[RMDB]
RNA sequence: GGGAACGACUCGAGUAGAGUCGAAAAUCGGGCUACGACUCGGGUGCCACGCAACUCGAUCUGUUCGCGGUCCCGGUACUGUAGGGGUAAUUCCCCACCUCACUCGGGAGAGUGCCAGUGUACGAACUAAUCUUGUCGAAUUCGUUCGACAAGAUUAAAAAGAAACAACAACAACAAC
Reactivity to 2A3 in 0.01 (KOAc 150mM, MgCl2 10mM, bicine 150mM(pH8.5), 24C), signal-to-noise 5, nucleotides 027 to 126: u060c010g000g020g000c000u040a010c010g030a020c030u030c070g000g010g010u070g050c030c050a100c090g060c060a050a130c030u050c070g140a200u070c220u120g080u140u050c020g000c020g020g000u160c000c010c000g000g010u060a100c090u130g070u120a080g000g000g000g010u030a060a100u140u300c000c000c000c000a010c000c010u010c000a010c010u030c020g060g060g000a140g000a000g050u030g010c030c000a060g030u110g060u130a100c100g060a140a020c040
Reactivity to DMS in 0.01 (KOAc 150mM, MgCl2 10mM, bicine 150mM(pH8.5), 24C), signal-to-noise 5, nucleotides 027 to 126: u000c080g000g010g010c010u000a030c000g010a050c060u010c020g000g010g020u010g010c030c080a070c120g010c160a050a030c010u010c150g010a100u010c200u000g000u000u000c010g020c040g000g000u010c010c010c000g010g010u000a050c110u010g030u000a070g000g010g010g010u010a140a170u000u010c000c000c000c060a070c030c020u010c010a040c010u000c000g000g030g000a180g010a090g020u000g000c080c050a050g010u000g000u010a100c150g000a100a140c200
Source information
Chemical mapping of a 177-nucleotide RNA with 2A3 and DMS. Reactivities are rounded to 0.1 and cut off at 0 and 3. The RNA was probed in 150 mM KOAc, 10 mM MgCl2 and 150 mM bicine (pH 8.5) at 24 C. The data come from the RNA Mapping Database (RMDB), library OK2TRN.